[RMDB]
RNA sequence: GGGAACGACUCGAGUAGAGUCGAAAACGAUCAAACCUUCACCGGCUAAGGCUUCAGUAGCAGGACCCACGCAAAGAUUAUUUUUAACGCCAUCUUGCAUGUCUUUGUUACCGCCUUUACCAAUGCCCACAAUUUAGUACUUCGGUACUAAAUUGUGAAAAGAAACAACAACAACAAC
Reactivity to 2A3 in 0.01 (KOAc 150mM, MgCl2 10mM, bicine 150mM(pH8.5), 24C), signal-to-noise 6, nucleotides 027 to 126: c030g020a050u140c100a070a050a130c020c020u150u120c070a050c090c060g020g010c030u020a020a020g020g000c000u120u080c060a030g000u030a000g000c000a000g000g020a000c020c030c040a050c100g000c020a080a100a030g010a010u050u060a100u080u300u060u130u190a130a030c090g030c060c010a010u010c010u010u010g000c000a020u060g020u000c010u110u270u060g010u010u010a010c000c020g000c000c000u000u000u020a020c020c010a060a080u130g040c030c020
Reactivity to DMS in 0.01 (KOAc 150mM, MgCl2 10mM, bicine 150mM(pH8.5), 24C), signal-to-noise 5, nucleotides 027 to 126: c110g010a120u020c120a070a090a130c080c060u000u000c090a090c120c080g010g020c060u000a030a030g020g000c020u010u010c270a050g010u000a020g010c010a020g000g010a030c010c090c210a060c100g000c040a040a020a070g010a040u000u000a070u010u010u010u010u020a080a140c220g010c190c170a040u000c010u000u010g010c030a040u000g000u000c000u010u010u000g010u000u000a040c020c130g000c010c000u000u000u000a080c040c030a080a080u000g010c100c080

This 177-nucleotide RNA was probed chemically with 2A3 and DMS. Conditions: 150 mM KOAc, 10 mM MgCl2 and 150 mM bicine (pH 8.5), 24 C.